[RMDB]
Annotation
The data come from the RNA Mapping Database (RMDB), library OK2TST. The record gives the reactivity of an RNA of 177 nucleotides to DMS. Values cover nucleotides 27 to 126. DMS adducts were read by reverse transcription with MarathonRT. The DMS profile rests on 667 reads.
RNA sequence: GGGAACGACUCGAGUAGAGUCGAAAAAAAGACUACAUGGACCGCAUCAAGAAGGAGCUGGUACGCAAGCAUGCGGUUGAGCUGAGGCAACAGCCGAAGAGCUUGAAGCAAAAGGAGCUCCAGAUAAUAAAUAGGUGGUGUUCGCACCACCUAUUUAAAAAGAAACAACAACAACAAC
Reactivity to DMS in 0.01 (KOAc 150mM, MgCl2 10mM, bicine 150mM(pH8.5), 24C), signal-to-noise 1, nucleotides 027 to 126: a030a100a100g020a080c060u010a050c060a010u030g010g000a070c040c020g000c070a080u010c100a030a090g000a070a090g000g000a030g010c000u010g030g030u000a080c200g010c060a060a070g000c050a080u000g000c030g000g000u000u000g010a080g030c000u000g030a180g030g000c030a030a110c140a090g000c010c000g000a060a080g030a120g000c010u000u010g010a120a090g000c070a140a070a100a120g000g010a060g000c000u000c000c000a190g010a130u010a050a110